Description:
The record gives the reactivity of an RNA of 177 nucleotides to DMS and 2A3. For 2A3, 1,177 sequencing reads were counted. DMS (dimethyl sulfate) methylates the pairing face of unpaired adenines and cytosines. DMS adducts were read by reverse transcription with MarathonRT. It was measured as part of the RMDB library OK2TRN.
[RMDB]
RNA sequence: GGGAACGACUCGAGUAGAGUCGAAAAAGGUGCCCCCGGCGCGGACGAGUUCGACCGAGUGGUGCCCGGGCCGCGCCGCGCGCAGUUCACCGCUCAGGCCGCGCACGCUGGCUGCCGGCAGGGGCGCGUAUGACUCGUGGUUCGCCACGAGUCAUACAAAAGAAACAACAACAACAAC
Reactivity to DMS in 0.01 (KOAc 150mM, MgCl2 10mM, bicine 150mM(pH8.5), 24C), signal-to-noise 2, nucleotides 027 to 126: a080g000g010u020g040c010c040c040c150c010g010g010c020g030c000g000g010a090c030g000a070g010u010u020c070g010a060c090c040g010a180g010u010g010g020u000g000c090c050c000g030g010g040c000c000g000c030g000c030c020g000c130g010c180g000c040a050g000u010u000c060a110c120c010g000c010u000c020a080g020g000c010c000g020c240g010c030a010c050g000c160u020g020g000c120u000g010c030c030g000g000c040a050g000g010g000g020c010g000c120
Reactivity to 2A3 in 0.01 (KOAc 150mM, MgCl2 10mM, bicine 150mM(pH8.5), 24C), signal-to-noise 1, nucleotides 027 to 126: a000g060g000u040g000c010c010c000c000c010g010g040c030g000c010g010g020a040c020g000a030g050u070u300c050g140a090c070c000g070a150g120u300g040g030u070g000c040c030c000g000g060g160c000c030g030c000g000c000c000g000c000g010c000g000c000a060g030u130u110c040a050c060c020g000c000u060c030a030g000g000c000c030g090c020g040c020a010c020g170c100u170g180g000c080u050g010c000c000g030g000c010a010g050g000g000g010c030g000c020